Chemical mapping of a 177-nucleotide RNA with 2A3 and DMS. The data come from the RNA Mapping Database (RMDB), library OK2TST.
RNA sequence: GGGAACGACUCGAGUAGAGUCGAAAAAUAAACUACGACUUCCCCAUGCAGAUCGACGACUACGUACAUCGUAUUGGCCGCACAGGCCGUGCAGGCGCGAAGGGAGAUGCGUUUACGCUUAUCACGAUGCCUAUGCGUAUUUCGAUACGCAUAGGCAAAAAGAAACAACAACAACAAC
Reactivity to 2A3 in 0.01 (KOAc 150mM, MgCl2 10mM, bicine 150mM(pH8.5), 24C), signal-to-noise 1, nucleotides 027 to 126: a000u080a010a100a000c130u160a020c080g160a120c020u050u010c000c030c000c000a040u100g000c040a030g070a110u070c030g060a190c060g010a050c070u070a060c000g120u050a080c040a030u000c010g010u000a050u100u190g040g000c000c000g050c020a090c030a070g100g000c080c010g000u000g000c000a040g050g000c020g000c010g090a040a070g050g000g000a130g020a030u090g000c000g010u000u000u080a020c020g000c030u060u030a060u180c040a000c050g010a040
Reactivity to DMS in 0.01 (KOAc 150mM, MgCl2 10mM, bicine 150mM(pH8.5), 24C), signal-to-noise 3, nucleotides 027 to 126: a090u010a070a100a100c130u000a120c050g000a130c110u010u000c010c010c000c110a090u010g010c040a080g010a080u000c060g010a090c110g010a050c070u000a040c040g030u000a080c160a080u000c030g040u000a100u000u010g060g000c020c000g000c190a090c170a140g010g030c050c030g000u000g000c060a090g020g000c040g010c030g020a110a100g000g000g000a070g000a030u000g000c060g030u000u000u000a120c050g020c030u000u000a070u000c060a050c070g000a130
Record summary
DMS (dimethyl sulfate) methylates the pairing face of unpaired adenines and cytosines.